[RMDB]
RNA sequence: GGGAACGACUCGAGUAGAGUCGAAAAGACGGUCUAGGCCGGCUGAUUCUGGCGCUCGACGGCACAGGGCUCUAUGCCGCGGACACGUCCGUUAUCAGCAUCCCCCGACAGGUCGGCAAGACGUACCUGAUCGGCUGCAUCGUGUUCGCCCUGGCGCCAGCUGCACUGUUUUCGAACAGUGCAGCUGAAAAGAAACAACAACAACAAC
Reactivity to DMS in 0.01 (KOAc 150mM, MgCl2 10mM, bicine 150mM(pH8.5), 24C), signal-to-noise 1, nucleotides 027 to 156: g030a060c020g010g000u000c020u030a180g030g010c020c000g000g030c000u000g010a140u010u000c040u000g020g000c050g000c010u010c030g030a130c060g000g000c000a030c010a080g030g020g030c110u010c090u010a030u000g030c000c000g050c010g050g010a060c110a050c060g000u000c040c070g010u000u000a080u000c010a070g020c000a130u000c010c000c040c010c010g000a030c010a000g000g030u000c000g000g000c020a180a190g000a230c020g000u010a030c000c010u000g000a120u000c010g050g000c070u010g000c020a080u010c030g030u000g000u000u010c030g010c020c040c030u020g030g000c000g000c040
Reactivity to 2A3 in 0.01 (KOAc 150mM, MgCl2 10mM, bicine 150mM(pH8.5), 24C), signal-to-noise 1, nucleotides 027 to 156: g030a000c010g000g020u010c050u150a030g280g000c030c020g000g050c040u030g010a100u120u010c060u090g000g000c020g030c000u120c120g120a130c030g020g000c030a010c100a260g030g060g000c000u010c010u040a130u250g000c010c010g020c010g000g010a020c010a010c050g060u060c000c040g090u130u160a070u180c050a000g030c000a210u180c000c000c010c000c030g000a010c000a000g000g010u000c000g000g090c110a110a030g200a060c000g000u070a070c000c000u130g050a300u000c010g020g000c000u020g000c010a080u040c020g010u010g030u020u040c000g000c000c060c000u060g020g030c010g030c030